[RMDB]
Chemical mapping of a 207-nucleotide RNA with 2A3 and DMS. For 2A3, 2,596 sequencing reads were counted. The data come from the RNA Mapping Database (RMDB), library OK3TST.
RNA sequence: GGGAACGACUCGAGUAGAGUCGAAAACAGGAGACACAAGGAACCAUUCAUGUGGCAGGUGGUGAUCAGAGAGAGAAAGCAGAGCUAACGGUGGAAGAUUUGAGAUAUGGAACCUAGUAAUUAUAGAUUUUUUGCACAAAUUAUGAGACUCUGCUUAACCUGCAUGAUUAUUCGUAAUCAUGCAGGUAAAAGAAACAACAACAACAAC
Reactivity to 2A3 in 0.01 (KOAc 150mM, MgCl2 10mM, bicine 150mM(pH8.5), 24C), signal-to-noise 4, nucleotides 027 to 156: c040a010g070g000a050g050a020c040a000c030a040a050g030g020a000a010c030c010a020u070u070c040a040u160g000u050g030g000c030a020g000g050u030g020g020u030g010a020u060c030a000g040a010g000a010g000a010g010a030a010a000g020c020a000g000a010g040c030u300a060a010c030g060g000u040g030g000a040a020g010a050u050u120u220g070a090g000a020u090a040u100g030g020a000a000c010c010u030a050g030u050a050a080u180u060a040u120a080g040a080u050u060u070u030u120u160g020c010a010c010a080a070a040u150u070a080u130g030a060g000a050c000u000c000u040g030c000u020u020a020
Reactivity to DMS in 0.01 (KOAc 150mM, MgCl2 10mM, bicine 150mM(pH8.5), 24C), signal-to-noise 3, nucleotides 027 to 156: c040a110g020g000a130g010a100c040a110c040a090a150g020g000a130a100c030c030a140u000u000c080a080u000g010u000g030g010c050a080g010g040u000g020g030u000g000a080u000c040a090g020a130g020a100g010a130g000a090a070a040g030c020a050g000a040g010c040u040a070a080c090g020g010u010g020g010a080a220g010a090u000u000u000g010a040g000a110u010a060u000g000g030a070a040c030c020u000a040g000u010a070a150u000u000a100u000a090g010a000u000u000u000u000u000u000g000c070a140c030a010a020a030u010u000a080u030g020a280g000a030c000u000c010u000g000c030u000u000a130

Record summary:
For 2A3 the reverse transcriptase was SuperScript II with manganese. The reactions ran in a buffer of 150 mM KOAc, 10 mM MgCl2 and 150 mM bicine (pH 8.5), at 24 C.